Source: RMDB library OK2TRN, as collected in RNAgym. This 177-nucleotide RNA was probed chemically with DMS and 2A3. For 2A3, 32,545 sequencing reads were counted. For DMS, 24,414 sequencing reads were counted.
[RMDB]
RNA sequence: GGGAACGACUCGAGUAGAGUCGAAAAGACGGACUCUUCUUGGAAUGUGAGGAGUCCGAGCCUUCUCACAUUCCAUUUGCCAUGAGGAGGCAGUGGUCUUCAUGGCGAAAUGGGAUGAAGACUACAGGCAGAGUUGUCUAUUCGUAGACAGCUCUGCAAAAGAAACAACAACAACAAC
Reactivity to DMS in 0.01 (KOAc 150mM, MgCl2 10mM, bicine 150mM(pH8.5), 24C), signal-to-noise 8, nucleotides 027 to 126: g010a150c010g000g000a030c000u000c010u000u000c010u000u000g020g020a140a100u010g010u010g010a010g000g000a020g000u000c010c000g000a020g010c040c020u000u000c020u000c070a190c030a010u000u000c000c000a020u000u000u000g010c010c010a020u000g000a020g010g010a050g010g010c070a060g010u010g010g010u000c000u000u000c000a010u000g000g010c010g010a010a020a030u000g010g000g010a010u000g000a150a040g010a070c170u010a100c280a110g010
Reactivity to 2A3 in 0.01 (KOAc 150mM, MgCl2 10mM, bicine 150mM(pH8.5), 24C), signal-to-noise 9, nucleotides 027 to 126: g030a010c010g010g000a000c010u010c000u040u040c030u070u160g170g240a280a090u240g110u060g080a010g000g000a000g000u000c000c010g000a030g010c000c010u020u030c010u000c010a100c000a010u010u010c010c000a010u020u000u020g000c010c000a010u010g000a010g030g020a020g040g020c050a030g130u190g100g040u000c000u010u000c000a010u000g010g020c020g020a020a020a020u020g000g010g000a000u010g010a010a010g040a010c110u180a080c080a050g150